Structure probing data (2A3 and DMS) for a 177-nucleotide construct. Conditions: 150 mM KOAc, 10 mM MgCl2 and 150 mM bicine (pH 8.5), 24 C. It was measured as part of the RMDB library OK2TST.
RNA sequence: GGGAACGACUCGAGUAGAGUCGAAAAGCCACAGUCAUUUUGGUGGAUCACACCAUCAUAGCCAUAGCGGUAACGGGGAAGAAGAGGAUUCACUAUGCGAGGAGAAUACUGGGCACAAUCACAGUCACAUACGCAAAAUAUUCGUAUUUUGCGUAUGAAAAGAAACAACAACAACAAC
Reactivity to 2A3 in 0.01 (KOAc 150mM, MgCl2 10mM, bicine 150mM(pH8.5), 24C), signal-to-noise 9, nucleotides 027 to 126: g010c010c010a100c020a080g090u100c090a100u030u070u120u140g020g000u010g010g020a070u080c040a030c010a020c070c000a030u050c020a030u060a030g000c010c010a060u100a070g070c060g060g010u030a070a040c050g010g000g010g030a050a050g060a060a020g060a070g040g020a030u050u040c030a020c030u060a060u120g030c040g040a040g050g020a050g040a060a010u060a100c030u030g000g000g020c030a010c030a050a050u120c050a020c020a100g090u080c030a020
Reactivity to DMS in 0.01 (KOAc 150mM, MgCl2 10mM, bicine 150mM(pH8.5), 24C), signal-to-noise 9, nucleotides 027 to 126: g010c020c020a080c100a080g000u020c100a090u000u000u010u000g010g030u000g000g010a090u010c230a110c110a110c020c000a050u000c050a040u000a160g010c040c040a110u010a100g010c090g000g020u000a060a090c160g000g000g000g010a090a070g010a050a070g010a100g010g000a080u000u000c060a050c080u000a050u010g010c060g010a080g000g000a070g010a050a050u010a050c050u000g000g000g010c050a070c130a050a050u010c090a060c110a080g000u010c140a150